Source: RMDB library TTRDES, as collected in RNAgym.
This 177-nucleotide RNA was probed chemically with DMS and 2A3.
Values cover nucleotides 27 to 126.
The RNA was probed in 150 mM KOAc, 10 mM MgCl2 and 150 mM bicine (pH 8.5) at 24 C.
For 2A3 the reverse transcriptase was SuperScript II with manganese.

RNA sequence: GGGAACGACUCGAGUAGAGUCGAAAAAAGAUAUGGAUAGUUGUCAGCCUUACCCUGCUCGACGACGAGCUUCGGAAACGAAGCUCAUCAGAGCAGGUAAGGCUUGGAUUUACUAUCCUAAGUCAAACUUAACGUUGAUGUUCGCAUCAACGUUAAGAAAAGAAACAACAACAACAAC
Reactivity to DMS in 0.01 (KOAc 150mM, MgCl2 10mM, bicine 150mM(pH8.5), 24C), signal-to-noise 3, nucleotides 027 to 126: a060a080g010a070u000a300u010g010g010a010u000a000g000u000u000g010u000c000a060g000c010c000u000u000a010c170c050c070u000g010c010u000c000g020a140c300g010a000c040g010a010g010c000u010u000c010g010g000a140a090a190c010g020a020a020g000c010u000c000a010u000c010a120g010a000g010c010a020g010g010u010a000a000g010g000c000u000u000g010g020a020u000u000u000a000c000u000a020u010c000c000u000a040a100g030u000c030a120a120a200
Reactivity to 2A3 in 0.01 (KOAc 150mM, MgCl2 10mM, bicine 150mM(pH8.5), 24C), signal-to-noise 2, nucleotides 027 to 126: a000a010g150a060u170a060u150g000g000a000u000a000g020u010u010g020u010c010a000g020c000c010u000u010a020c120c060c020u010g010c010u040c040g220a300c120g000a020c070g000a030g010c010u000u000c020g050g010a020a060a040c010g000a000a000g000c000u000c020a000u010c010a020g000a010g000c000a000g000g010u000a000a000g010g010c010u000u010g000g000a000u100u220u090a010c010u010a000u000c000c000u010a100a040g030u000c060a140a050a070